[RMDB]
RNA sequence: GGGAACGACUCGAGUAGAGUCGAAAAUCCGUCCGGUUAUGGAAGUACAAUUCUUAGGUUUCGUAUUCGAAGUAUUUGAUGCGAUUGCUGGACAAAUUGCACGUACUCGUUUCCGUUCAGGCGGUACUCCAGCGAUACGGUUCGCCGUAUCGCUGGAAAAAGAAACAACAACAACAAC
Reactivity to DMS in 0.01 (KOAc 150mM, MgCl2 10mM, bicine 150mM(pH8.5), 24C), signal-to-noise 1, nucleotides 027 to 126: u030c050c000g000u000c000c000g040g010u000u000a070u010g000g000a040a110g010u030a010c030a160a110u030u000c040u000u010a170g030g010u000u000u010c040g010u000a010u010u000c010g010a070a160g020u000a090u000u000u000g020a100u000g000c020g000a000u000u000g030c030u000g010g000a110c300a050a030a010u000u000g010c050a020c050g020u010a050c070u000c020g010u000u000u000c020c000g000u000u010c210a120g000g020c110g010g000u000a070c120
Reactivity to 2A3 in 0.01 (KOAc 150mM, MgCl2 10mM, bicine 150mM(pH8.5), 24C), signal-to-noise 1, nucleotides 027 to 126: u030c010c030g020u000c010c010g000g010u070u070a080u100g120g030a060a010g010u020a020c000a050a160u070u070c040u140u260a120g120g000u090u010u070c030g040u030a110u130u040c000g020a060a000g070u160a300u110u030u120g040a020u010g020c030g020a050u030u130g070c010u070g010g070a010c020a020a090a000u030u120g030c080a030c140g030u170a020c000u020c030g050u030u020u000c010c000g000u050u090c060a000g020g000c010g000g000u050a060c020

Chemical mapping of a 177-nucleotide RNA with DMS and 2A3. Reactivities are given for positions 27 through 126. For DMS the reverse transcriptase was MarathonRT. Source: RMDB library OK2TST, as collected in RNAgym. The reactions ran in a buffer of 150 mM KOAc, 10 mM MgCl2 and 150 mM bicine (pH 8.5), at 24 C.